Conditions: 150 mM KOAc, 10 mM MgCl2 and 150 mM bicine (pH 8.5), 24 C. An RNA of 207 nucleotides, treated with 2A3 and DMS and read out base by base. Reactivities are given for positions 27 through 156. High DMS reactivity at an A or C suggests that its Watson-Crick edge is free. For 2A3 the reverse transcriptase was SuperScript II with manganese. The data come from the RNA Mapping Database (RMDB), library OK3TST.

[RMDB]
RNA sequence: GGGAACGACUCGAGUAGAGUCGAAAAUGUAUUUUAUAUGUAAGUGUCGCAUGAAUCGAUGCAGGAGUGAAGGUGUGCGUUCUGGAAUAAAUGCAUGUGUGUGAAAGCAAAGGCCGGGGUGGGCUGCGCUUGGAGGGAGAUGUGCCAAGCUCCAGAACACAAAAAGUUAGUUCGCUAACUUUUUGUGAAAAGAAACAACAACAACAAC
Reactivity to 2A3 in 0.01 (KOAc 150mM, MgCl2 10mM, bicine 150mM(pH8.5), 24C), signal-to-noise 3, nucleotides 027 to 156: u040g010u040a080u070u160u120u110a190u100a080u140g050u080a070a090g040u040g040u100c030g000c080a050u080g120a130a070u140c090g030a030u050g020c040a040g010g020a050g010u060g030a080a000g050g000u050g010u020g040c010g010u080u010c030u050g000g050a040a020u110a120a110a040u160g010c010a060u050g010u010g020u000g010u030g120a150a030a000g010c050a100a030a060g060g000c060c080g010g000g010g060u060g020g050g020c010u070g020c040g000c010u010u030g010g010a020g020g000g000a080g010a060u050g000u010g030c000c000a020a050g000c010u030c010c020a020g020a110a030
Reactivity to DMS in 0.01 (KOAc 150mM, MgCl2 10mM, bicine 150mM(pH8.5), 24C), signal-to-noise 2, nucleotides 027 to 156: u000g030u010a070u020u000u010u010a120u000a090u050g010u000a040a130g010u000g020u000c010g020c060a110u020g010a070a090u000c050g020a140u010g020c050a060g010g010a080g030u000g020a080a060g040g060u010g030u000g020c090g000u000u000c030u000g030g000a090a170u000a020a080a090u000g020c040a050u000g010u000g040u020g050u000g010a080a040a140g020c030a120a150a130g030g030c050c060g020g000g020g060u010g020g030g020c030u000g020c170g020c080u030u010g000g020a080g010g000g020a150g000a060u000g000u010g030c010c010a010a120g020c040u000c010c030a090g000a060a300